Structure probing data (2A3 and DMS) for a 177-nucleotide construct. For 2A3, 762 sequencing reads were counted. DMS adducts were read by reverse transcription with MarathonRT. The RNA was probed in 150 mM KOAc, 10 mM MgCl2 and 150 mM bicine (pH 8.5) at 24 C. 2A3 adducts were read by reverse transcription with SuperScript II with manganese. It was measured as part of the RMDB library OK1LIB.
[RMDB]
RNA sequence: GGGAACGACUCGAGUAGAGUCGAAAACUUUUACCCCGUUUGCGUCGCUCCAUCCGGUCUGGAGCAGUCACCUCAAGAACUUCUAACCCGGUGUUCUGAAAAUAACGAAGCAAACCGGAACCAUAGGUGUAGGGUGACGGUUCGCCGUCACCCUACAAAAAGAAACAACAACAACAAC
Reactivity to 2A3 in 0.01 (KOAc 150mM, MgCl2 10mM, bicine 150mM(pH8.5), 24C), signal-to-noise 2, nucleotides 027 to 126: c000u010u050u230u290a110c000c020c000c000g090u020u050u070g050c040g000u040c010g000c010u000c010c000a120u050c000c050g080g050u000c010u010g030g020a010g000c090a000g000u000c000a010c010c000u050c030a000a090g060a010a000c000u160u020c000u060a060a260c000c020c020g080g000u000g080u120u030c050u050g010a110a060a000a070u240a100a010c090g090a020a030g100c060a020a050a020c030c010g010g130a000a030c000c000a020u060a130g160g020
Reactivity to DMS in 0.01 (KOAc 150mM, MgCl2 10mM, bicine 150mM(pH8.5), 24C), signal-to-noise 2, nucleotides 027 to 126: c130u030u060u020u010a070c000c000c010c150g050u030u010u020g000c000g000u060c130g000c050u000c010c000a060u030c030c050g020g000u000c160u010g000g000a020g000c050a060g010u000c050a060c040c020u010c110a090a030g010a030a040c020u000u030c050u000a060a150c150c030c050g020g040u000g020u000u000c050u050g040a120a050a080a080u000a200a100c070g000a130a090g030c120a000a070a060c080c000g000g020a130a080c180c070a000u010a120g100g010
Reactivities are rounded to 0.1 and cut off at 0 and 3. The DMS profile rests on 1,604 reads.